[RMDB]
RNA sequence: GGGAACGACUCGAGUAGAGUCGAAAAGCGUACUACGAACUCUGCGAAGCAUAACUACCCACCUGAGGUCCCAAAUAGGACCUCAGAGGUUAUGCGAUGUAUAGAGCUUCGUAUCGCAAAAUGACAGUGCUUCCCGUUCGCGGGAAGCACUGUCAAACACACCGUAUCGAUUCGUCGAUACGGUGUGAAAAGAAACAACAACAACAAC
Reactivity to 2A3 in 0.01 (KOAc 150mM, MgCl2 10mM, bicine 150mM(pH8.5), 24C), signal-to-noise 1, nucleotides 027 to 156: g000c000g010u140a080c020u000a010c030g000a010a000c000u000c000u020g010c010g160a090a020g000c000a000u000a020a000c020u140a150c060c160c000a040c020c010u010g000a000g000g000u040c040c020c010a190a300a060u300a150g000g000a020c020c000u000c000a000g000a000g000g010u000u000a000u000g000c010g000a020u090g010u030a190u040a150g000a000g040c090u000u000c000g000u000a030u300c010g000c000a000a000a000a300u110g000a000c000a000g000u000g020c000u010u000c020c000c000g000u080u090c210g000c000g050g000g000a000a000g000c000a000c000u000g000u000c000a000a000a000